[RMDB]
Structure probing data (2A3 and DMS) for a 177-nucleotide construct. The data come from the RNA Mapping Database (RMDB), library OK1LIB. 2A3 adducts were read by reverse transcription with SuperScript II with manganese. The 2A3 profile rests on 10,202 reads. High DMS reactivity at an A or C suggests that its Watson-Crick edge is free. Reactivities are given for positions 27 through 126. Reactivities are rounded to 0.1 and cut off at 0 and 3.

RNA sequence: GGGAACGACUCGAGUAGAGUCGAAAAGAAUGGCUCGCGCGGAGAUAAGUGGAGUUCCGCGAUGUGGCACUCCAAGACGCGUCCAACUAUAGAUAGACGUUAAUGUCAAAACUCAACAGACGCGUCAGCUAUUUAGCCAGUUCGCUGGCUAAAUAGCAAAAGAAACAACAACAACAAC
Reactivity to 2A3 in 0.01 (KOAc 150mM, MgCl2 10mM, bicine 150mM(pH8.5), 24C), signal-to-noise 9, nucleotides 027 to 126: g050a040a110u210g050g000c000u010c010g010c000g010c010g060g010a030g030a100u190a210a090g140u200g140g130a100g020u040u000c010c000g000c010g040a060u090g030u190g030g000c020a050c050u010c010c000a030a030g000a000c000g000c000g000u010c030c020a060a030c050u070a040u070a210g090a100u050a040g010a010c040g070u170u260a150a080u300g000u010c000a020a010a030a100c060u080c080a040a050c010a070g010a000c010g000c000g010u000c010a000
Reactivity to DMS in 0.01 (KOAc 150mM, MgCl2 10mM, bicine 150mM(pH8.5), 24C), signal-to-noise 4, nucleotides 027 to 126: g010a130a100u020g000g010c030u000c020g010c030g000c000g000g000a030g010a100u010a080a080g030u030g010g030a110g020u020u000c000c000g000c050g010a040u020g000u070g040g000c020a080c050u010c020c010a100a110g010a000c000g000c010g010u000c000c040a060a160c180u020a150u000a040g020a060u010a270g000a010c000g000u020u040a130a110u060g010u010c020a010a070a090a120c040u000c140a060a120c300a140g000a010c010g000c000g000u010c010a090